The record gives the reactivity of an RNA of 177 nucleotides to 2A3 and DMS.
RNA sequence: GGGAACGACUCGAGUAGAGUCGAAAAGAUAUGGACAUUUACCAGCGAAGAACUCGGAAACGAGGGAGCUGUGUAACGGUGUCCUAAGUCAAAUCCCUAGUAAUAUCUUCGGAUAUUACUAGGGAAACGAUCUUUAUUAGUUCGCUAAUAAAGAUCGAAAAGAAACAACAACAACAAC
Reactivity to 2A3 in 0.01 (KOAc 150mM, MgCl2 10mM, bicine 150mM(pH8.5), 24C), signal-to-noise 6, nucleotides 027 to 126: g030a020u080a060u190g000g000a000c010a010u060u060u060a010c010c000a000g020c010g240a300a050g040a070a050c000u000c010g000g050a090a070a050c010g000a000g020g000g000a010g000c010u010g070u060g010u300a030a050c110g070g010u010g000u000c000c000u020a170a010g050u020c040a040a030a170u040c000c000c000u000a010g000u000a000a000u000a000u010c010u050u080c300g090g000a000u000a000u000u010a000c000u000a000g000g000g000a010a000a000
Reactivity to DMS in 0.01 (KOAc 150mM, MgCl2 10mM, bicine 150mM(pH8.5), 24C), signal-to-noise 7, nucleotides 027 to 126: g010a040u000a300u010g000g000a010c000a010u000u000u000a010c010c000a010g010c000g010a100a150g010a100a230c000u000c000g000g000a140a110a200c000g000a010g000g000g000a050g010c000u000g010u000g000u000a010a020c300g010g010u000g000u000c000c000u010a050a120g010u010c050a080a130a100u000c000c000c000u000a010g000u000a000a000u000a000u000c000u000u020c210g020g000a000u000a000u000u000a000c000u010a000g000g000g000a000a000a030
The 2A3 profile rests on 17,065 reads.
Conditions: 150 mM KOAc, 10 mM MgCl2 and 150 mM bicine (pH 8.5), 24 C.